[RMDB]
Chemical mapping of a 177-nucleotide RNA with 2A3 and DMS. For 2A3, 2,595 sequencing reads were counted. It was measured as part of the RMDB library OK2TRN. Values cover nucleotides 27 to 126. For 2A3 the reverse transcriptase was SuperScript II with manganese.
RNA sequence: GGGAACGACUCGAGUAGAGUCGAAAAUGACAAGAUCAGUGACCUUGAUAUUGCCCUUGCUUGAUGAGCGCUCGAUCACCAGGGGGUGAGAAGGGCCAAUGCCAUCGGCAAAGUGUGCCAGCUUGUCACACGUGGUCACAUUCGUGUGACCACGUGUAAAAGAAACAACAACAACAAC
Reactivity to 2A3 in 0.01 (KOAc 150mM, MgCl2 10mM, bicine 150mM(pH8.5), 24C), signal-to-noise 3, nucleotides 027 to 126: u100g010a000c010a030a000g020a100u140c060a030g100u050g150a130c040c000u040u100g090a050u090a050u170u170g000c030c000c000u000u030g070c030u150u300g030a020u040g030a060g040c020g000c010u020c020g040a060u030c010a010c010c000a120g240g110g050g030g030u010g010a010g050a050a080g000g000g040c020c020a040a040u240g010c030c010a010u030c000g000g020c000a010a020a020g120u120g060u060g000c020c020a030g040c060u060u060g020u000c010
Reactivity to DMS in 0.01 (KOAc 150mM, MgCl2 10mM, bicine 150mM(pH8.5), 24C), signal-to-noise 3, nucleotides 027 to 126: u020g000a070c040a000a000g020a060u020c060a080g000u000g000a080c080c040u000u010g000a080u010a060u020u000g010c000c000c010u000u010g010c030u000u020g030a030u010g010a060g000c070g010c040u000c010g010a300u000c010a000c010c020a300g030g010g010g020g020u000g010a010g010a110a080g000g000g000c010c300a050a030u010g010c030c000a010u000c020g000g040c000a010a010a040g020u010g010u020g010c040c100a080g010c050u000u000g000u010c030